RNA sequence: GGGAACGACUCGAGUAGAGUCGAAAACUGAGAGCCAUUUAUGAGACCGGGCCCCCUCCUGAGCCACAUCACUACCGACCCGGAGACCGGGUAUACGUGCGGAGACAUAAGCAAGAGACCCUCCAACCCAGGUAAAUCAAUUCGUUGAUUUACCUGGAAAAGAAACAACAACAACAAC
Reactivity to 2A3 in 0.01 (KOAc 150mM, MgCl2 10mM, bicine 150mM(pH8.5), 24C), signal-to-noise 7, nucleotides 027 to 126: c040u080g030a040g010a010g150c010c020a070u070u140u100a190u160g090a060g020a060c030c000g010g040g000c000c000c010c000c000u020c010c010u040g030a020g010c010c000a040c000a040u060c010a010c050u080a080c010c050g050a030c000c010c000g040g000a090g080a060c070c000g000g000g000u040a070u030a040c060g010u030g030c030g020g020a030g010a030c020a070u140a040a060g030c010a040a030g030a010g020a110c010c000c010u030c020c020a070a070c000
Reactivity to DMS in 0.01 (KOAc 150mM, MgCl2 10mM, bicine 150mM(pH8.5), 24C), signal-to-noise 4, nucleotides 027 to 126: c030u020g000a110g010a110g010c040c030a070u000u030u010a100u040g010a120g020a080c060c040g000g020g020c010c030c000c020c030u010c010c010u020g000a090g000c030c020a050c080a070u010c030a060c070u000a140c090c080g010a060c020c010c000g010g020a180g010a100c060c020g000g000g000u000a030u010a080c140g010u010g000c060g010g010a070g010a080c050a020u020a060a110g010c090a090a080g020a100g000a070c020c000c020u020c030c060a050a090c220
Structure probing data (2A3 and DMS) for a 177-nucleotide construct. As a SHAPE reagent, 2A3 marks flexible, mostly unpaired nucleotides at the ribose 2'-OH. Reactivities are given for positions 27 through 126.